This 207-nucleotide RNA was probed chemically with DMS and 2A3. The DMS profile rests on 2,374 reads.
RNA sequence: GGGAACGACUCGAGUAGAGUCGAAAAACCCUCUUUCGAGAGGGUAACUCCUAAGUCACCAUGAUCUUUGUAGCACGAUAAGUCUCGGAAACGAGACUUUUGACGUGCGCAGAUAAAGAUCCUCUGGUGAUAUGGAUCGGUGCAGUUUCGACUGCACGAGUUGAGAUCAUUUCGAUGAUCUCAACUCAAAAGAAACAACAACAACAAC
Reactivity to DMS in 0.01 (KOAc 150mM, MgCl2 10mM, bicine 150mM(pH8.5), 24C), signal-to-noise 1, nucleotides 027 to 156: a080c000c000c000u010c000u010u000u020c280g010a030g010a030g010g000g000u000a000a020c060u020c030c000u000a080a300g010u000c010a020c010c000a030u010g010a030u000c010u010u000u000g060u020a280g030c000a030c000g030a160u010a030a010g000u000c010u000c000g020g010a210a090a300c000g030a010g010a010c000u000u000u000u030g010a210c040g050u000g000c000g010c180a060g040a090u010a020a000a020g000a010u000c020c020u000c030u000g000g020u000g010a000u000a070u000g010g010a070u010c060g030g030u000g000c030a010g030u000u010u010c260g050a130c040u000g010c010a010c010
Reactivity to 2A3 in 0.01 (KOAc 150mM, MgCl2 10mM, bicine 150mM(pH8.5), 24C), signal-to-noise 2, nucleotides 027 to 156: a000c010c030c000u020c010u040u120u130c260g130a030g000a000g000g000g000u020a020a080c030u030c010c000u070a160a040g030u000c000a010c010c000a020u200g010a000u020c010u010u040u050g070u050a070g010c000a000c000g040a050u010a060a020g000u000c000u000c000g060g060a110a080a020c010g000a000g000a020c000u020u000u000u020g090a030c000g010u010g000c000g000c020a010g020a170u210a110a100a010g000a000u010c000c000u010c000u010g000g000u010g000a000u000a010u010g030g010a060u160c170g060g000u000g000c010a020g000u010u120u260c190g170a100c000u000g000c010a000c030